[RMDB]
RNA sequence: GGGAACGACUCGAGUAGAGUCGAAAAUCACAAAGCGGAUUUAGCUCGGUUGGGAGAGGUCCAGACCGAAGAUCUGGUUGUCCUGUGGGCGAGCCACAGAAUUCGCACCAUAAACAACGGGAGAUUCCGCAUAGUCGAUGUUCGCAUCGACUAUGCGAAAAGAAACAACAACAACAAC
Reactivity to 2A3 in 0.01 (KOAc 150mM, MgCl2 10mM, bicine 150mM(pH8.5), 24C), signal-to-noise 2, nucleotides 027 to 126: u090c010a020c030a060a180a000g040c080g120g000a010u050u020u130a050g040c010u010c030g000g120u070u030g010g060g010a170g020a000g020g100u040c000c000a000g030a000c000c070g190a050a050g020a030u010c000u010g020g000u020u060g020u040c000c010u020g000u060g000g000g000c000g030a010g010c000c100a170c070a070g020a010a010u040u010c000g000c050a200c020c000a010u100a070a140a020c020a060a020c000g080g040g000a100g030a010u040u070c010
Reactivity to DMS in 0.01 (KOAc 150mM, MgCl2 10mM, bicine 150mM(pH8.5), 24C), signal-to-noise 2, nucleotides 027 to 126: u000c010a100c030a060a070a120g000c040g000g020a000u040u000u000a090g000c070u000c010g000g030u000u000g000g000g000a120g000a150g040g000u030c000c000a160g000a030c030c120g050a110a160g000a190u000c010u010g000g010u000u000g020u000c150c050u000g010u000g070g000g000c060g000a060g000c130c070a140c150a140g000a040a150u040u000c030g140c000a150c010c050a060u030a040a060a030c120a000a040c150g000g000g000a090g030a020u000u000c000
Chemical mapping of a 177-nucleotide RNA with 2A3 and DMS. For DMS the reverse transcriptase was MarathonRT. The reactions ran in a buffer of 150 mM KOAc, 10 mM MgCl2 and 150 mM bicine (pH 8.5), at 24 C. As a SHAPE reagent, 2A3 marks flexible, mostly unpaired nucleotides at the ribose 2'-OH. In probing experiments dimethyl sulfate is read out at A N1 and C N3, which are open when not base-paired. For DMS, 1,508 sequencing reads were counted. The data come from the RNA Mapping Database (RMDB), library OK1LIB.